[RMDB]
RNA sequence: GGGAACGACUCGAGUAGAGUCGAAAAAGCGAUGAUACGUCAUCGCAACGAUUGCCUGAUCGUAAAACAGGAGACGGCCGUGGCCGCGACCACGUAAAAAAGCGUAACGUGGUCUACGCACCACGAAAAAAGCGCGGAACGUUCGCGUUCCGCGCAACUUGGAGUCAUAGUUCGCUAUGACUCCAAGAAAAGAAACAACAACAACAAC
Reactivity to 2A3 in 0.01 (KOAc 150mM, MgCl2 10mM, bicine 150mM(pH8.5), 24C), signal-to-noise 2, nucleotides 027 to 156: a000g010c010g010a000u010g000a000u030a090c210g090u020c010a000u000c000g000c010a010a020c000g010a020u000u020g000c020c000u010g020a040u010c030g070u210a000a030a000a040c010a030g040g020a030g100a060c120g090g050c120c000g000u010g000g000c050c010g020c010g020a010c000c000a010c030g040u050a010a040a020a020a020a000g110c040g040u060a070a010c010g000u000g000g010u000c050u020a050c090g030c020a010c000c000a010c020g060a130a040a010a000a010a000g020c020g000c000g000g010a000a000c010g050u070u110c160g030c010g170u010u010c020c010g050c050g000c010a000a000

The record gives the reactivity of an RNA of 207 nucleotides to 2A3.
The 2A3 profile rests on 1,225 reads.
The reactions ran in a buffer of 150 mM KOAc, 10 mM MgCl2 and 150 mM bicine (pH 8.5), at 24 C.
Values cover nucleotides 27 to 156.
For 2A3 the reverse transcriptase was SuperScript II with manganese.